RNA sequence: GGGAACGACUCGAGUAGAGUCGAAAAGAAAGAAAGAAAGAAAUCUGACAGAAUGACGGAUUCGAACGUUGUGGUCGGCGGGCCACCACGUCAUUCCUUCGCACUGUCUCCGGGCAGACCGCCAUAAAAAAGCGGAUCUACUUCGGUAGAUCCGCAAGUACUUAUCCGUGUUCGCACGGAUAAGUACAAAAGAAACAACAACAACAAC
Reactivity to DMS in 0.01 (KOAc 150mM, MgCl2 10mM, bicine 150mM(pH8.5), 24C), signal-to-noise 1, nucleotides 027 to 156: g000a110a070a050g020a110a080a090g000a100a020a110g000a120a060a070u000c020u030g040a300c070a130g000a060a030u000g010a020c020g000g000a130u000u020c050g000a040a100c020g000u000u010g050u000g030g010u010c040g010g010c120g110g010g000c000c020a010c010c030a070c040g000u000c000a130u000u000c010c010u000u000c090g030c090a180c050u020g000u010c050u030c020c120g020g000g010c060a120g000a010c000c000g000c000c010a240u050a000a090a120a000a050a150g020c000g000g030a040u000c010u020a000c000u010u000c300g030g000u000a010g010a000u000c000c010g010c000a000a040
Reactivity to 2A3 in 0.01 (KOAc 150mM, MgCl2 10mM, bicine 150mM(pH8.5), 24C), signal-to-noise 4, nucleotides 027 to 156: g040a020a070a010g060a050a080a010g080a040a110a030g070a050a090a050u070c070u090g020a080c030a070g160a170a210u150g030a030c040g020g010a030u080u110c080g010a060a000c010g000u010u000g000u000g000g000u020c050g020g040c050g010g020g000c000c000a000c010c020a000c000g010u010c010a030u040u060c010c010u080u130c050g020c050a040c030u010g010u010c000u020c060c060g010g000g000c030a020g020a070c000c020g000c000c000a040u260a030a150a010a030a010a000g000c000g000g000a000u000c000u000a000c000u000u040c170g050g000u010a000g010a010u000c000c000g000c000a000a000